[RMDB]
RNA sequence: GGGAACGACUCGAGUAGAGUCGAAAAUCAGCUGGUGGGCCGGCUGGACGCUGCUCGAUCUCCGGAGCUUGCGACCAGGAAUCCGAUUCCGCGGCCGCCGCGCCGAAGCGACUCAGCACCGCCCGCGGCAAGUAAGGGUGUUCGCACCCUUACUUGCAAAAGAAACAACAACAACAAC
Reactivity to 2A3 in 0.01 (KOAc 150mM, MgCl2 10mM, bicine 150mM(pH8.5), 24C), signal-to-noise 1, nucleotides 027 to 126: u050c040a060g000c010u060g000g050u090g020g070g130c070c010g020g040c030u020g020g010a010c020g020c000u030g030c020u000c050g110a190u040c080u060c120c000g030g010a000g010c000u120u140g020c030g000a020c020c000a010g070g010a070a040u160c230c140g120a190u040u000c040c020g000c040g000g010c080c010g010c000c010g040c030g000c000c010g030a060a000g010c020g060a070c030u030c130a000g000c020a040c040c020g010c020c000c010g050c050g100
Reactivity to DMS in 0.01 (KOAc 150mM, MgCl2 10mM, bicine 150mM(pH8.5), 24C), signal-to-noise 2, nucleotides 027 to 126: u000c050a140g000c030u000g000g050u010g020g020g000c020c040g010g010c100u020g010g010a080c000g030c020u000g020c300u010c030g000a100u010c060u030c060c010g000g010a050g000c050u000u010g020c010g020a100c010c000a120g000g000a040a070u010c170c100g010a190u000u000c020c000g020c080g010g020c010c010g040c020c270g010c020g020c010c020g000a060a070g000c090g000a110c080u000c060a090g010c060a150c060c070g000c010c010c040g010c100g000
Description
This 177-nucleotide RNA was probed chemically with 2A3 and DMS. Values cover nucleotides 27 to 126. The reactions ran in a buffer of 150 mM KOAc, 10 mM MgCl2 and 150 mM bicine (pH 8.5), at 24 C. For 2A3 the reverse transcriptase was SuperScript II with manganese. For DMS, 1,255 sequencing reads were counted. Source: RMDB library OK2TRN, as collected in RNAgym.